[RMDB]
Source: RMDB library RFMREP, as collected in RNAgym. An RNA of 177 nucleotides, treated with DMS and read out base by base. Values cover nucleotides 27 to 126.
RNA sequence: GGGAACGACUCGAGUAGAGUCGAAAACCGUUGCGGAGAGUGUGUCAGCCCCAUCGCAGUGCACCUCACUGCCCUCCCGCUUCCCCGGCCACUUGGCACUCACUACCCCCUCCCCUUCCCUUCUCCCCUGUCUAAUUGAGUUCGCUCAAUUAGACAGAAAAGAAACAACAACAACAAC
Reactivity to DMS in 0.01 (KOAc 150mM, MgCl2 10mM, bicine 150mM(pH8.5), 24C), signal-to-noise 2, nucleotides 027 to 126: c030c010g020u010u010g020c040g030g020a120g020a070g000u000g030u000g020u010c060a160g010c040c010c040c090a110u000c120g030c010a070g000u010g000c160a080c070c060u000c050a070c020u010g000c030c040c030u010c010c010c040g000c080u000u000c020c010c010c070g000g010c010c030a040c100u000u000g000g000c020a090c060u000c020a060c040u010a300c020c010c000c010c000u010c010c000c000c020u000u010c010c010c000u000u000c040u000c000c010c120